[RMDB]
RNA sequence: GGGAACGACUCGAGUAGAGUCGAAAAACAGCGGGAUAUCUAUUGACUGCAUAUUCUGUGCCAAACAUUCUUUUAGGCAUUGAUGCUAACACAGCAAAUAAAACGGAAAAGCCUGUGCCUUUGUGGAGGUUAUAUUCUGGUAGAGGAAGGUGUAAAGCACAGCUACUCUAUUCGUAGAGUAGCUGUGAAAAGAAACAACAACAACAAC
Reactivity to 2A3 in 0.01 (KOAc 150mM, MgCl2 10mM, bicine 150mM(pH8.5), 24C), signal-to-noise 3, nucleotides 027 to 156: a000c030a000g030c020g010g020g020a040u050a050u120c040u070a100u150u180g090a120c060u060g010c030a030u030a040u140u020c020u020g050u020g030c020c010a050a140a060c030a090u160u130c040u090u170u070u090a030g000g010c000a010u000u080g060a040u050g000c040u050a080a010c080a020c020a120g030c020a030a060a100u160a050a130a040a030c060g060g000a060a030a050a040g000c010c030u020g010u020g000c000c000u070u050u110g050u050g020g030a020g020g000u060u020a060u010a020u130u080c040u030g030g000u040a030g010a030g070g030a010a030g000g000u010g010u060a060a060a000g010
Reactivity to DMS in 0.01 (KOAc 150mM, MgCl2 10mM, bicine 150mM(pH8.5), 24C), signal-to-noise 2, nucleotides 027 to 156: a050c080a200g050c010g030g010g040a080u010a070u000c050u010a150u010u010g020a170c020u000g000c040a190u000a060u000u000c010u010g030u000g030c000c000a090a100a100c160a070u010u000c060u000u010u000u000a190g030g010c090a080u000u010g030a070u000g020c000u010a110a060c070a030c020a050g030c060a050a080a140u020a070a050a060a160c050g010g000a070a040a150a170g020c040c060u010g020u000g000c010c070u000u000u010g020u000g020g000a060g010g010u010u000a080u000a050u000u000c030u000g010g040u000a070g040a100g000g050a000a060g000g000u000g010u000a060a080a140g020

Source information: Structure probing data (2A3 and DMS) for a 207-nucleotide construct. DMS adducts were read by reverse transcription with MarathonRT. Values cover nucleotides 27 to 156. It was measured as part of the RMDB library OK3TST. 2A3 adducts were read by reverse transcription with SuperScript II with manganese. For 2A3, 1,883 sequencing reads were counted. As a SHAPE reagent, 2A3 marks flexible, mostly unpaired nucleotides at the ribose 2'-OH. Conditions: 150 mM KOAc, 10 mM MgCl2 and 150 mM bicine (pH 8.5), 24 C.